The record gives the reactivity of an RNA of 177 nucleotides to 2A3 and DMS.
RNA sequence: GGGAACGACUCGAGUAGAGUCGAAAAAGACAUACGUUCGCGUAUGUCUGACGGGCUCCUGACCCUAAGGAAAUGCUCUAUGACAGGACACACUGAUUGUGAUACCUCGAGAUUUCGAUCUCGAGAAUUAACGGAAAACAUUCGUGUUUUCCGUUAAAAAAGAAACAACAACAACAAC
Reactivity to 2A3 in 0.01 (KOAc 150mM, MgCl2 10mM, bicine 150mM(pH8.5), 24C), signal-to-noise 5, nucleotides 027 to 126: a000g000a000c000a000u000a000c010g040u020u050c200g000c000g110u010a000u010g000u000c000u000g000a020c020g000g030g050c020u010c020c000u080g150a200c010c020c010u030a050a030g050g040a060a170a090u150g020c000u020c040u060a110u140g090a060c030a020g040g030a040c010a000c000a000c070u090g130a260u220u040g040u020g050a070u110a140c010c020u000c010g010a000g000a000u030u110u160c250g040a020u020c000u000c000g000a000g000a000a030
Reactivity to DMS in 0.01 (KOAc 150mM, MgCl2 10mM, bicine 150mM(pH8.5), 24C), signal-to-noise 8, nucleotides 027 to 126: a010g000a010c000a000u000a000c010g020u000u010c210g020c010g020u000a000u000g000u000c000u000g010a070c200g000g010g010c030u010c000c010u000g010a200c020c010c010u000a100a070g000g000a050a100a100u010g010c040u000c020u000a080u010g010a150c110a050g010g010a110c050a050c030a060c070u000g010a110u000u000g010u000g000a160u000a100c210c000u000c000g010a010g000a010u000u000u020c180g010a030u000c000u000c000g000a010g010a060a070
The 2A3 profile rests on 4,879 reads.